[RMDB]
RNA sequence: GGGAACGACUCGAGUAGAGUCGAAAACAGCUUGUGGAAACACAGUUGUGGCCGAGUUAAUAGCCCUGGGUAUAGUAACAAUGUUGAAUAUGACUCUUAAUUGAGGAAAUGGGUGAUCCGCAGCCAAAUCCUAAGGACAUUUUAUUGUCUAUGGAUGCAUUCAAAGCCUGUUCGCAGGCUUUGAAUGAAAAGAAACAACAACAACAAC
Reactivity to 2A3 in 0.01 (KOAc 150mM, MgCl2 10mM, bicine 150mM(pH8.5), 24C), signal-to-noise 1, nucleotides 027 to 156: c000a000g050c050u230u230g000u050g030g000a000a070a010c000a000c000a000g020u050u040g010u020g020g010c010c010g000a020g040u050u220a110a040u070a160g030c000c040c020u010g000g000g040u120a070u030a210g080u090a070a030c010a120a120u120g030u090u130g080a050a040u150a070u160g100a050c010u000c000u040u120a230a150u260u140g010a050g050g010a020a030a050u120g000g000g010u010g020a020u050c020c000g000c030a000g070c020c000a040a230a000u020c000c000u030a060a090g010g000a000c000a000u070u170u060u190a120u300u090g010u000c000u000a010u060g000g030a010u000g010
Reactivity to DMS in 0.01 (KOAc 150mM, MgCl2 10mM, bicine 150mM(pH8.5), 24C), signal-to-noise 1, nucleotides 027 to 156: c040a080g040c040u010u000g060u000g010g010a130a080a250c020a060c000a040g010u000u000g030u000g000g040c020c020g000a160g010u000u000a080a030u000a210g010c010c000c020u000g020g000g030u030a050u030a090g040u000a090a080c050a110a120u000g010u010u000g000a080a050u000a090u010g010a110c010u000c030u000u000a110a260u000u000g000a040g020g010a030a070a090u000g010g000g020u000g000a080u000c050c020g010c010a100g000c010c050a040a150a050u000c000c000u010a050a160g030g000a010c000a020u000u010u000u000a040u040u020g020u000c010u000a300u000g010g000a070u000g000